[RMDB]
RNA sequence: GGGAACGACUCGAGUAGAGUCGAAAAGAUAUGGAAGUCACCGACAUGGAUUCUUUCGGAAACGAAAGUUAUCCAACAGCGGUACUUCCUAAGUCAAAACUUUUCACUCGUUCGCGAGUGAAAAGAACAUGUGUCAUACGUUCGCGUAUGACACAUGAAAAGAAACAACAACAACAAC
Reactivity to DMS in 0.01 (KOAc 150mM, MgCl2 10mM, bicine 150mM(pH8.5), 24C), signal-to-noise 3, nucleotides 027 to 126: g010a030u000a150u020g010g000a000a020g000u000c270a010c000c000g030a040c060a270u010g010g010a020u000u010c000u000u000u010c000g010g010a060a030a100c010g010a000a020a010g010u010u000a010u000c000c000a080a100c290a140g010c000g010g000u010a020c000u000u000c000c000u000a020a090g000u000c010a160a140a120a230c010u000u010u000u000c000a000c010u000c000g000u000u000c260g000c020g000a010g000u000g000a000a000a010a000g010a110a210
Reactivity to 2A3 in 0.01 (KOAc 150mM, MgCl2 10mM, bicine 150mM(pH8.5), 24C), signal-to-noise 3, nucleotides 027 to 126: g010a030u030a010u080g000g020a000a010g020u070c170a070c070c000g180a270c170a300u300g000g000a000u000u000c010u020u010u000c000g000g000a040a020a000c010g020a040a000a010g010u070u060a070u030c020c000a160a050c080a040g010c010g010g020u000a000c000u020u020c010c000u000a030a010g020u000c000a030a030a080a210c020u000u020u000u020c030a030c010u020c000g070u100u080c300g030c020g110a000g000u000g010a000a020a000a020g010a010a020
Chemical mapping of a 177-nucleotide RNA with DMS and 2A3. Reactivities are given for positions 27 through 126. 2A3 adducts were read by reverse transcription with SuperScript II with manganese. The 2A3 profile rests on 4,761 reads. DMS adducts were read by reverse transcription with MarathonRT. 2A3 is a SHAPE reagent: it acylates the 2'-hydroxyl of flexible nucleotides of all four kinds.